[RMDB]
RNA sequence: GGGAACGACUCGAGUAGAGUCGAAAACUUCAGGAGGUCAAGACGUUUUCGCCCUCGUUCUGAGUUCGCAAGUGGCAAUACCUAUGCUUUGUAUGUGCGGGACACACUGCAGCCGGGGAUGCGAGUGUCCCCUCUGGGGGUUCGCCCCCAGAGGGGAAAAAGAAACAACAACAACAAC
Reactivity to DMS in 0.01 (KOAc 150mM, MgCl2 10mM, bicine 150mM(pH8.5), 24C), signal-to-noise 4, nucleotides 027 to 126: c040u000u010c060a070g020g010a090g000g020u000c080a100a090g010a050c070g010u010u000u010u000c030g010c080c030c020u000c030g000u010u000c030u010g000a070g000u010u000c040g030c090a060a090g030u010g010g010c040a060a060u000a180c040c050u000a100u000g020c050u000u010u000g010u000a060u010g040u000g000c070g000g010g010a110c090a060c040a050c070u000g010c040a040g000c220c100g010g000g000g010a150u000g000c040g000a100g000u000g000
Reactivity to 2A3 in 0.01 (KOAc 150mM, MgCl2 10mM, bicine 150mM(pH8.5), 24C), signal-to-noise 2, nucleotides 027 to 126: c000u080u050c010a060g000g100a030g070g100u140c090a080a040g100a040c030g040u130u000u000u000c010g060c020c010c000u010c010g020u050u040c050u070g030a070g010u050u060c050g000c080a120a080g020u090g130g010c010a050a070u080a230c010c000u160a110u180g020c010u150u090u110g070u040a110u050g100u010g020c030g000g060g030a000c030a010c020a000c080u080g010c000a000g040c000c040g010g000g000g040a010u080g030c000g040a020g040u030g060
Structure probing data (DMS and 2A3) for a 177-nucleotide construct. The reactions ran in a buffer of 150 mM KOAc, 10 mM MgCl2 and 150 mM bicine (pH 8.5), at 24 C. The DMS profile rests on 4,210 reads.